[RMDB]
RNA sequence: GGGAACGACUCGAGUAGAGUCGAAAAUCGAAUCACAUUUCCACUAGGAUGUUCAAUGCCAGUGUUAGUAAUUGGGACCACGGUCCCACUUGGAUAUCCAAUGCCAACGUUGGUAAUUGGGACCACGCCAGUUAAUAGGAUUCGUCCUAUUAACUGGAAAAGAAACAACAACAACAAC
Reactivity to DMS in 0.01 (KOAc 150mM, MgCl2 10mM, bicine 150mM(pH8.5), 24C), signal-to-noise 9, nucleotides 027 to 126: u010c090g020a140a110u010c110a100c120a130u000u000u000c040c020a110c130u000a160g010g010a050u000g010u010u010c100a040a040u010g010c010c020a030g010u010g010u000u010a040g010u010a050a080u000u000g010g010g010a050c020c030a080c270g040g010u000c010c020c020a020c050u000u000g010g010a130u010a080u000c010c010a030a040u000g000c020c030a040a100c170g000u010u000g010g010u000a030a050u000u000g000g000g000a050c020c040a090c270g000
Reactivity to 2A3 in 0.01 (KOAc 150mM, MgCl2 10mM, bicine 150mM(pH8.5), 24C), signal-to-noise 9, nucleotides 027 to 126: u080c020g070a030a050u110c030a040c030a200u060u080u030c030c010a040c070u070a120g050g020a060u060g070u220u110c080a070a030u170g050c000c010a020g010u020g030u100u080a060g030u090a110a230u100u090g010g000g000a000c010c020a060c140g050g010u020c010c010c000a010c000u010u020g010g010a040u050a100u160c010c000a010a020u030g010c000c010a070a040c240g130u100u040g000g000u070a240a150u020u020g020g000g000a000c020c010a020c050g030